RNA sequence: GGGAACGACUCGAGUAGAGUCGAAAACUACCCGGUGGAAACAACUGAAGCUUCAACGCCUUUUUUUCCAAUCUUCUUUAGCACCGGGCUAGGGAGUAAGCCCGUGGAACCUUAGUUUUGUUCCCUCGGGACUUACUUGUGGUUCCUGUGGUGCACUACACUAAUAGCUCUUCGGAGCUAUUAGUGUAAAAGAAACAACAACAACAAC
Reactivity to 2A3 in 0.01 (KOAc 150mM, MgCl2 10mM, bicine 150mM(pH8.5), 24C), signal-to-noise 2, nucleotides 027 to 156: c070u140a140c000c000c000g020g020u010g030g010a020a000a020c010a040a050c110u040g080a150a010g030c000u230u190c100a120a050c130g010c020c020u010u020u000u000u000u020u050c050c020a170a200u040c080u130u030c010u040u170u190a050g010c000a020c000c020g020g000g020c000u070a100g060g000g070a020g020u000a010a000g010c000c000c000g010u030g010g010a010a000c010c010u080u090a160g040u230u250u300u180g010u000u000c000c010c010u020c030g000g040g060a090c010u010u010a010c000u010u010g040u040g020g000u060u300c000c000u120g100u120g120g000u020g010c000a010c030u010
Source: RMDB library VIROID, as collected in RNAgym. Chemical mapping of a 207-nucleotide RNA with 2A3. The 2A3 profile rests on 744 reads.